An RNA of 177 nucleotides, treated with 2A3 and DMS and read out base by base. 2A3 adducts were read by reverse transcription with SuperScript II with manganese.
[RMDB]
RNA sequence: GGGAACGACUCGAGUAGAGUCGAAAACGAUGGCGGCGGCGGCGGGCCAUGGAGACAGAGAGCGUGCCGGGGUGGUAGAGUUUGACAGGCAAGCAUGUGCGUGCAGAGGCGAGUAGUGCUUGCCUGUGCACUCUGUAGGAUUCGUCCUACAGAGUGCAAAAGAAACAACAACAACAAC
Reactivity to 2A3 in 0.01 (KOAc 150mM, MgCl2 10mM, bicine 150mM(pH8.5), 24C), signal-to-noise 5, nucleotides 027 to 126: c040g070a080u100g060g010c050g020g010c010g010g000c010g000g000c030g010g010g000c020c010a080u110g040g020a040g020a010c070a060g110a000g010a000g060c070g020u060g040c010c020g030g000g000g020u050g010g040u080a040g000a060g090u040u090u180g030a010c000a000g010g000c000a000a000g000c000a010u060g080u190g240c020g030u100g040c080a040g060a080g300g000c010g020a030g050u130a010g010u040g020c000u000u000g000c000c000u000g010u000
Reactivity to DMS in 0.01 (KOAc 150mM, MgCl2 10mM, bicine 150mM(pH8.5), 24C), signal-to-noise 3, nucleotides 027 to 126: c040g020a060u020g000g000c010g000g000c090g020g000c130g000g000c070g000g010g050c090c030a080u030g010g000a090g000a090c080a110g000a100g000a090g000c090g010u020g000c080c050g020g030g000g040u030g010g020u000a050g010a120g000u000u020u020g000a180c000a010g000g000c000a010a000g000c000a020u010g020u040g010c020g010u020g020c060a110g000a110g000g000c000g010a100g010u030a250g020u010g000c000u000u010g000c000c000u020g000u000